[RMDB]
RNA sequence: GGGAACGACUCGAGUAGAGUCGAAAACCGAGUGAGUUCGCUCACUCGGAAAGAAGUGUGCGCAUUCUGCUGCGACAGUAGCGACAAGAGCAGCAAGCAAAAAAACAAACCUGUUCGCAGGUUUGAAACCUUUAUGGAGAUUCGUCUCCAUAAAGGUAAAAGAAACAACAACAACAAC
Reactivity to DMS in 0.01 (KOAc 150mM, MgCl2 10mM, bicine 150mM(pH8.5), 24C), signal-to-noise 6, nucleotides 027 to 126: c000c000g010a010g030u000g000a030g010u000u010c240g010c010u000c000a000c000u000c000g000g000a020a040a070g000a100a070g020u010g020u010g010c050g010c040a110u010u010c090u000g010c010u000g020c020g010a140c250a070g000u000a060g000c080g000a070c060a060a080g010a230g000c010a040g010c040a070a130g010c130a000a000a050a060a040a070a160c010a010a000a000c000c000u000g010u000u010c160g030c010a000g000g000u000u000u000g000a070a090
Reactivity to 2A3 in 0.01 (KOAc 150mM, MgCl2 10mM, bicine 150mM(pH8.5), 24C), signal-to-noise 6, nucleotides 027 to 126: c000c000g000a000g000u010g000a010g010u020u180c190g040c120u000c010a000c000u000c000g010g020a030a020a000g050a060a020g100u100g030u060g120c040g000c050a080u120u090c040u110g000c010u020g000c000g020a020c050a060g090u110a030g080c050g080a070c060a150a040g030a020g090c030a000g010c020a040a030g030c060a030a060a060a070a030a000a030c010a000a000a010c000c010u000g020u020u040c180g020c100a000g000g030u000u000u010g000a050a020
Overview: Structure probing data (DMS and 2A3) for a 177-nucleotide construct. The reactions ran in a buffer of 150 mM KOAc, 10 mM MgCl2 and 150 mM bicine (pH 8.5), at 24 C. For 2A3 the reverse transcriptase was SuperScript II with manganese. It was measured as part of the RMDB library M2PK50. For 2A3, 10,495 sequencing reads were counted.